RNA sequence: GGGAACGACUCGAGUAGAGUCGAAAAACCCUCUCCAUCGUCCGCCACCAACAUCUACGAUCUAUCCCGCGAGGCAGCUGCCGCCCAGUAUGCCAUGAAGAGUAUGGACUCCAGUGCUGUCCUGGCAAUAUAGUAGUCACUUCGGUGACUACUAUAUAAAAGAAACAACAACAACAAC
Reactivity to DMS in 0.01 (KOAc 150mM, MgCl2 10mM, bicine 150mM(pH8.5), 24C), signal-to-noise 7, nucleotides 027 to 126: a070c020c010c000u000c040u000c020c010a080u010c070g010u000c030c040g010c030c030a060c050c040a070a080c090a060u000c040u000a100c070g000a070u000c060u000a130u000c010c010c020g030c090g000a080g000g010c030a060g000c030u000g010c030c040g010c050c040c030a080g000u000a070u000g010c030c010a070u000g010a070a090g010a090g020u000a070u000g010g000a100c040u000c020c030a090g030u000g010c040u000g010u000c020c010u000g000g010c100a100
Reactivity to 2A3 in 0.01 (KOAc 150mM, MgCl2 10mM, bicine 150mM(pH8.5), 24C), signal-to-noise 3, nucleotides 027 to 126: a000c000c010c000u010c010u010c000c000a100u050c030g040u020c010c020g010c000c020a030c020c000a030a040c010a080u030c020u120a030c070g060a070u030c010u070a090u070c070c010c010g030c040g020a090g040g000c010a020g020c030u050g020c020c010g010c000c010c000a040g040u070a080u150g020c010c000a020u090g070a070a060g080a020g090u060a070u130g030g010a030c000u000c030c040a030g040u030g010c000u020g020u070c010c000u000g040g000c010a010